The record gives the reactivity of an RNA of 177 nucleotides to 2A3 and DMS. For 2A3, 1,601 sequencing reads were counted. For DMS, 944 sequencing reads were counted. Reactivities are rounded to 0.1 and cut off at 0 and 3. DMS adducts were read by reverse transcription with MarathonRT.
[RMDB]
RNA sequence: GGGAACGACUCGAGUAGAGUCGAAAAGUGCACGACUUCGGUCGUGCACAAAUAAAGGCAGUCGAGUGCGUACGGCACAGUCAUACGCUGACCCCACGACAAAAAGUAACGUCUUCGGACGUUACAACAGAACUCUUCAGUUCGCUGAAGAGUUCUGAAAAGAAACAACAACAACAAC
Reactivity to 2A3 in 0.01 (KOAc 150mM, MgCl2 10mM, bicine 150mM(pH8.5), 24C), signal-to-noise 2, nucleotides 027 to 126: g000u000g000c020a010c000g030a000c000u050u140c210g060g010u000c010g000u020g000c000a020c000a000a000a000u010a000a000a000g040g050c030a020g010u040c020g070a050g110u080g000c010g020u060a050c050g090g000c000a040c040a220g090u090c010a060u030a130c050g000c010u060g090a130c000c000c010c020a060c030g050a040c070a000a130a010a040a000g010u000a010a000c000g000u000c000u040u080c120g070g000a000c000g000u010u010a000c000a020a000
Reactivity to DMS in 0.01 (KOAc 150mM, MgCl2 10mM, bicine 150mM(pH8.5), 24C), signal-to-noise 1, nucleotides 027 to 126: g010u000g030c000a010c000g000a000c010u000u000c230g070g010u000c000g030u050g000c000a010c000a000a010a050u010a050a120a140g000g000c070a050g010u000c040g000a160g010u000g040c010g020u000a010c190g030g000c040a060c130a100g000u000c080a060u010a040c020g010c030u020g000a040c020c070c000c040a140c060g000a020c100a040a030a190a070a080g010u000a000a010c000g000u000c000u000u010c100g010g010a000c000g010u000u000a000c000a120a150